About this RNA: Conditions: 150 mM KOAc, 10 mM MgCl2 and 150 mM bicine (pH 8.5), 24 C. Chemical mapping of a 177-nucleotide RNA with DMS and 2A3. DMS adducts were read by reverse transcription with MarathonRT.
RNA sequence: GGGAACGACUCGAGUAGAGUCGAAAAGGAGAUCGAAGAGGACCGACGUCAGCACGGUCGGGAUGUAGGUCCGCAUGCAUCCAAGUUGACGAAACUUCACGAUUUCCAAAGCGGACAAGAAGUCAAAAGCUCACUCAGUAUUCGUACUGAGUGAGCUAAAAGAAACAACAACAACAAC
Reactivity to DMS in 0.01 (KOAc 150mM, MgCl2 10mM, bicine 150mM(pH8.5), 24C), signal-to-noise 1, nucleotides 027 to 126: g000g000a020g000a010u000c010g000a180a170g120a100g000g000a010c050c100g040a130c000g000u070c120a090g030c100a220c010g050g000u000c020g030g000g070a000u000g040u000a020g000g000u000c010c000g000c000a070u000g030c000a000u020c000c060a090a020g000u000u040g020a100c130g000a250a040a040c000u000u070c050a300c080g000a000u000u010u000c000c020a080a090a120g000c000g000g000a030c000a080a040g000a040a050g020u070c120a000a100a040
Reactivity to 2A3 in 0.01 (KOAc 150mM, MgCl2 10mM, bicine 150mM(pH8.5), 24C), signal-to-noise 2, nucleotides 027 to 126: g000g000a000g000a000u010c030g020a100a170g110a190g160g050a010c000c010g030a020c020g060u230c070a000g040c050a000c030g070g000u060c090g090g020g000a000u010g010u000a000g000g010u000c000c000g000c000a000u000g000c000a000u000c000c000a060a020g000u000u000g040a050c100g020a060a040a050c000u030u030c000a000c000g020a000u000u010u000c010c000a090a150a010g000c000g030g000a010c010a020a070g170a180a000g110u170c170a000a100a030

Values cover nucleotides 27 to 126. 2A3 adducts were read by reverse transcription with SuperScript II with manganese.